Structure probing data (2A3 and DMS) for a 177-nucleotide construct.
Source: RMDB library RFMREP, as collected in RNAgym.
[RMDB]
RNA sequence: GGGAACGACUCGAGUAGAGUCGAAAAGGUUCCGCCGUUAUCGGGCCUUUGCAAUAGUUGCCAACGACAACUUUGCUCCGGUGGCUGUCGCCGCGUAAGCGGUGCCAAAAACCGACCUAAAGUCCUAACUGUUUGAUAAGUUCGCUUAUCAAACAGUAAAAGAAACAACAACAACAAC
Reactivity to 2A3 in 0.01 (KOAc 150mM, MgCl2 10mM, bicine 150mM(pH8.5), 24C), signal-to-noise 3, nucleotides 027 to 126: g100g010u230u300c010c010g020c070c050g270u130u160a120u150c000g000g020g000c010c000u050u030u080g000c010a020a050u080a280g010u000u030g030c050c050a110a070c110g110a060c010a010a000c000u030u030u000g000c000u050c050c030g010g000u000g000g000c030u010g000u020c000g000c020c000g000c020g030u020a120a010g000c010g000g000u000g000c010c010a010a000a000a010a020c010c000g040a050c000c020u120a170a090a010g110u040c000c010u020a060
Reactivity to DMS in 0.01 (KOAc 150mM, MgCl2 10mM, bicine 150mM(pH8.5), 24C), signal-to-noise 4, nucleotides 027 to 126: g010g000u000u010c010c010g040c300c190g000u000u020a040u010c020g000g000g000c000c000u000u000u000g010c010a020a030u000a000g020u010u000g000c000c030a120a150c270g010a280c000a010a010c010u000u000u010g010c010u000c160c010g000g020u000g010g000c300u000g020u000c000g010c000c000g000c010g000u010a110a140g010c000g020g000u000g010c050c010a020a090a230a150a030c010c000g000a180c060c050u000a060a070a210g000u010c020c020u000a160